[RMDB]
RNA sequence: GGGAACGACUCGAGUAGAGUCGAAAAGAGUACCCCAGCGUGUUCCGCUCGCUGCUGGGGAUUUCGUGGAUGUGGUUCUUUGGCGCGGUCUUCCUGUCGCAGUUCCCUGCGUUCGCCAAGGAGGUGCGGAAGUACACACUUUCGAGUGUGUACUUCCAAAAGAAACAACAACAACAAC
Reactivity to 2A3 in 0.01 (KOAc 150mM, MgCl2 10mM, bicine 150mM(pH8.5), 24C), signal-to-noise 2, nucleotides 027 to 126: g090a020g040u200a180c010c010c000c000a000g000c030g060u040g030u130u070c070c090g020c080u070c010g000c030u140g000c000u000g030g010g120g000a030u080u110u040c020g040u090g050g030a150u050g020u020g080g080u070u010c050u060u030u070g030g000c040g000c040g010g070u000c000u020u010c000c000u030g010u010c000g010c040a000g010u030u040c010c000c020u030g000c000g080u070u050c020g000c010c000a000a030g050g010a060g030g060u050g000c000
Reactivity to DMS in 0.01 (KOAc 150mM, MgCl2 10mM, bicine 150mM(pH8.5), 24C), signal-to-noise 1, nucleotides 027 to 126: g000a090g010u000a070c010c000c000c010a050g020c000g010u000g000u000u010c050c130g000c070u020c030g000c010u030g030c010u000g020g000g040g000a020u000u000u000c000g010u020g000g000a060u020g020u020g000g040u010u020c020u000u020u020g010g010c010g010c290g010g010u000c020u010u010c010c020u000g000u000c030g000c040a060g000u000u000c030c010c020u010g000c040g020u000u010c020g000c020c010a070a070g000g010a030g010g040u000g010c230
Chemical mapping of a 177-nucleotide RNA with 2A3 and DMS. The 2A3 profile rests on 1,218 reads. DMS adducts were read by reverse transcription with MarathonRT. Reactivities are given for positions 27 through 126. The RNA was probed in 150 mM KOAc, 10 mM MgCl2 and 150 mM bicine (pH 8.5) at 24 C.